[RMDB]
RNA sequence: GGGAACGACUCGAGUAGAGUCGAAAAUUACUUCCGACGCGGACGCCAUUGCAGCGGGUUAUGUGAAAGAAACCGAUAGCAACGGCGUGCUGACCUUCGGUGCUAACGACAUUAAGGGCUACGAAACCGAUUUGUGAGCGUUCGCGCUCACAAAUCGAAAAGAAACAACAACAACAAC
Reactivity to 2A3 in 0.01 (KOAc 150mM, MgCl2 10mM, bicine 150mM(pH8.5), 24C), signal-to-noise 1, nucleotides 027 to 126: u030u010a070c060u150u020c010c030g080a100c090g010c030g130g000a010c000g040c010c010a020u010u070g000c010a080g030c020g060g020g020u080u070a110u120g240u110g200a170a130a070g090a170a070a000c020c000g040a030u060a070g000c000a000a000c000g000g070c010g000u020g010c010u010g120a140c010c010u010u040c070g000g010u010g040c010u050a030a060c060g090a000c050a000u010u140a070a040g060g000g030c030u040a000c040g040a170a000a020c010
Reactivity to DMS in 0.01 (KOAc 150mM, MgCl2 10mM, bicine 150mM(pH8.5), 24C), signal-to-noise 1, nucleotides 027 to 126: u000u010a140c120u010u000c000c000g020a110c300g000c110g020g000a010c010g000c010c000a050u000u000g010c010a130g010c020g000g000g020u020u000a070u000g010u000g010a120a090a050g010a090a100a060c000c000g000a120u000a100g000c020a030a020c090g000g010c010g010u000g040c050u000g000a140c050c020u000u000c070g020g000u020g010c030u000a140a100c130g010a130c040a030u000u010a080a150g000g000g010c050u000a080c150g000a050a120a140c120
This 177-nucleotide RNA was probed chemically with 2A3 and DMS. DMS adducts were read by reverse transcription with MarathonRT. For 2A3 the reverse transcriptase was SuperScript II with manganese. High DMS reactivity at an A or C suggests that its Watson-Crick edge is free. Source: RMDB library OK2TST, as collected in RNAgym. For DMS, 883 sequencing reads were counted.